[RMDB]
RNA sequence: GGGAACGACUCGAGUAGAGUCGAAAAUUGGACCAGCGCAAUCAGGCACAGACAAGGCCUGCUAGAGGCCAGCAUCGCCGCGGUAGAGGUGUACGUCCCGCAAAACAACCCAGGCAGCACCCGAAACCGGGAAUCAAUGAUUCGUCAUUGAUUCCCGAAAAGAAACAACAACAACAAC
Reactivity to DMS in 0.01 (KOAc 150mM, MgCl2 10mM, bicine 150mM(pH8.5), 24C), signal-to-noise 3, nucleotides 027 to 126: u010u010g040g010a100c000c020a080g000c050g000c040a100a030u040c060a080g040g000c000a040c080a090g000a070c190a090a130g000g000c010c000u010g010c160u020a070g000a100g010g030c000c070a080g000c050a030u020c040g020c010c010g010c080g010g050u040a090g010a140g000g000u020g020u030a030c120g000u000c000c000c000g000c180a040a070a070a030c120a110a120c030c010c040a060g010g010c050a010g000c070a040c040c020c050g000a060a060a090c150
Reactivity to 2A3 in 0.01 (KOAc 150mM, MgCl2 10mM, bicine 150mM(pH8.5), 24C), signal-to-noise 3, nucleotides 027 to 126: u150u080g040g010a030c010c010a010g030c010g010c060a030a080u080c010a050g010g030c000a020c010a070g080a050c030a170a060g030g000c010c000u020g010c000u050a030g040a030g200g010c000c020a000g010c010a040u040c010g020c040c010g000c000g030g000u020a040g010a060g060g030u060g030u050a050c040g030u020c020c040c000g020c030a060a110a050a050c060a040a030c000c000c000a000g030g000c000a010g010c000a030c010c000c000g020a060a000a010c040
Chemical mapping of a 177-nucleotide RNA with DMS and 2A3.
2A3 adducts were read by reverse transcription with SuperScript II with manganese.